[RMDB]
RNA sequence: GGGAACGACUCGAGUAGAGUCGAAAAGAAUUUUGUUCAAUCUAAGGGGACAAGGGUAGAAGUAAAAUCUGAGUGGGUAGGUCAGCUUUCAGCUAGGUAUCAGCAACCAUCUAAGUUGCAACCAUAUUCAACGUUUAUAGACGAUAUGUUCGUCACAGUCGAUUUACUAUUUCGAUAGUAAAUCGACAAAAGAAACAACAACAACAAC
Reactivity to DMS in 0.01 (KOAc 150mM, MgCl2 10mM, bicine 150mM(pH8.5), 24C), signal-to-noise 1, nucleotides 027 to 156: g000a090a100u010u000u010u000g000u010u000c050a150a110u000c060u020a110a170g020g000g010g010a070c040a060a080g030g000g030u000a040g000a080a090g000u000a050a050a110a090u000c050u000g020a060g000u000g000g020g050u000a180g050g000u000c030a100g050c050u000u010u000c030a100g000c000u010a040g000g030u000a130u000c070a100g010c040a080a050c000c010a220u010c160u000a050a160g030u000u000g020c030a130a090c060c020a060u000a120u010u000c030a080a050c060g000u000u000u000a130u000a080g010a010c000g000a100u010a060u000g030u010u010c030g020u000c010a080c090a110
Reactivity to 2A3 in 0.01 (KOAc 150mM, MgCl2 10mM, bicine 150mM(pH8.5), 24C), signal-to-noise 4, nucleotides 027 to 156: g020a030a050u130u130u140u120g050u110u090c020a020a060u000c080u170a060a050g030g020g000g000a030c020a030a050g080g010g000u060a050g030a070a040g040u150a090a060a000a020u100c090u070g030a030g050u060g010g050g040u020a040g000g070u040c050a000g000c050u050u130u110c080a030g000c040u110a030g020g030u030a050u090c030a030g000c000a000a000c020c020a050u130c070u110a120a050g000u000u030g010c010a000a020c030c040a030u020a070u160u070c060a050a050c040g030u070u080u080a120u060a030g020a000c020g000a010u000a030u210g120u080u030c010g010u000c020a010c000a100

This 207-nucleotide RNA was probed chemically with DMS and 2A3. For 2A3, 1,879 sequencing reads were counted. In probing experiments dimethyl sulfate is read out at A N1 and C N3, which are open when not base-paired. For 2A3 the reverse transcriptase was SuperScript II with manganese. DMS adducts were read by reverse transcription with MarathonRT.